[RMDB]
Annotation: This 177-nucleotide RNA was probed chemically with DMS and 2A3. The reactions ran in a buffer of 150 mM KOAc, 10 mM MgCl2 and 150 mM bicine (pH 8.5), at 24 C. For DMS the reverse transcriptase was MarathonRT. The 2A3 profile rests on 9,810 reads.
RNA sequence: GGGAACGACUCGAGUAGAGUCGAAAAGAUAUGGAGAUCGGCCACGAGUCUGGGUUCGGAAACGAACCCAAGGACGAUGAGUGGCGAUCUCCUAAGUCAAACUUGGAAGCGGUUCGCCGCUUCCAAGCUUCUGUUAUUACUUCGGUAAUAACAGAAGAAAAGAAACAACAACAACAAC
Reactivity to DMS in 0.01 (KOAc 150mM, MgCl2 10mM, bicine 150mM(pH8.5), 24C), signal-to-noise 3, nucleotides 027 to 126: g010a020u000a010u010g000g000a020g010a010u000c000g020g030c000c010a010c000g010a040g030u000c000u000g000g000g010u000u010c000g020g010a010a010a030c010g000a010a010c000c000c010a020a020g030g020a010c010g020a200u010g010a140g010u000g000g010c000g000a000u000c000u000c000c000u000a000a050g000u000c010a170a080a300c010u010u000g000g000a010a010g020c010g020g010u000u010c250g000c020c000g000c000u000u000c000c000a000a010g010
Reactivity to 2A3 in 0.01 (KOAc 150mM, MgCl2 10mM, bicine 150mM(pH8.5), 24C), signal-to-noise 3, nucleotides 027 to 126: g010a010u020a000u020g000g000a000g000a010u010c040g300g290c130c000a010c050g090a050g010u000c020u100g000g000g000u000u000c010g000g010a010a010a010c010g010a000a000c010c000c010a010a020g080g000a000c010g080a200u300g070a020g000u000g000g010c000g000a000u010c000u000c000c000u010a000a000g000u000c010a040a070a120c020u000u000g000g020a020a000g010c030g040g090u110u240c300g050c150c020g000c030u010u010c010c000a010a000g010